Chemical mapping of a 207-nucleotide RNA with 2A3. The 2A3 profile rests on 447 reads.

RNA sequence: GGGAACGACUCGAGUAGAGUCGAAAACAAUUCACAAUGGGGUUCAUGCUCUCAUGAGAAUCCAGUGCUGCCACUGAUCUGACAGGAGACAGAGCUCAGGCAAUAAUGCAGGUGAUGGGAAGCAGCUGUCAAUACAGAUGAAGCUUUGCUUACUCAAAGCGUAUGAGGUGUUCGCACCUCAUACGCUAAAAGAAACAACAACAACAAC
Reactivity to 2A3 in 0.01 (KOAc 150mM, MgCl2 10mM, bicine 150mM(pH8.5), 24C), signal-to-noise 1, nucleotides 027 to 156: c030a050a090u020u050c090a100c060a060a190u030g000g000g010g000u040u000c080a060u170g000c000u000c010u010c000a050u100g060a000g000a110a020u050c120c000a020g070u010g060c120u100g150c140c010a010c020u010g000a020u000c010u090g070a050c070a210g020g000a020g020a020c010a060g020a020g000c000u000c020a000g080g000c050a060a150u150a150a000u130g000c020a060g050g040u020g040a030u030g040g010g020a020a020g010c000a000g040c020u020g130u170c040a060a060u110a260c080a010g120a060u060g090a100a070g000c100u080u170u100g040c000u000u260a200c040u010c070a150a030